[RMDB]
RNA sequence: GGGAACGACUCGAGUAGAGUCGAAAAAAAGUCGAGUGAGCCUGCUCCAAAGGCUCUUUCGUUGAUUAUGUGUGCCAGAACAACGCCAUAGGUAUCAUUCUUCGUCUUCUUAGGCGCGGAACAUCUACAUUCCAAAUAAGUUCGCUUAUUUGGAAUGAAAAGAAACAACAACAACAAC
Reactivity to 2A3 in 0.01 (KOAc 150mM, MgCl2 10mM, bicine 150mM(pH8.5), 24C), signal-to-noise 4, nucleotides 027 to 126: a000a000a000g090u040c010g010a010g020u020g000a000g010c000c000u020g020c080u080c100c020a070a050a000g000g000c000u000c000u000u020u000c000g000u010u040g050a070u040u150a080u100g130u010g060u110g050c030c000a050g050a080a020c040a040a010c050g030c020c020a050u040a050g040g060u070a040u140c040a050u060u000c010u010u020c000g010u000c000u150u020c030u120u280a020g000g000c000g000c010g000g000a010a020c000a010u020c000u050a070
Reactivity to DMS in 0.01 (KOAc 150mM, MgCl2 10mM, bicine 150mM(pH8.5), 24C), signal-to-noise 8, nucleotides 027 to 126: a040a040a100g010u000c030g010a040g010u000g000a010g010c000c000u000g010c140u010c170c170a090a120a020g000g000c000u000c010u000u010u000c030g010u000u010g010a090u000u000a060u000g020u000g020u010g020c040c040a120g000a100a070c120a060a080c090g010c080c060a100u000a040g010g010u000a050u000c110a120u000u000c010u000u000c020g010u000c020u000u000c220u010u010a030g010g000c010g010c060g000g000a030a030c180a040u000c060u000a110
Source information: An RNA of 177 nucleotides, treated with 2A3 and DMS and read out base by base. It was measured as part of the RMDB library RFMREP. For DMS, 12,816 sequencing reads were counted. The RNA was probed in 150 mM KOAc, 10 mM MgCl2 and 150 mM bicine (pH 8.5) at 24 C. Reactivities are given for positions 27 through 126.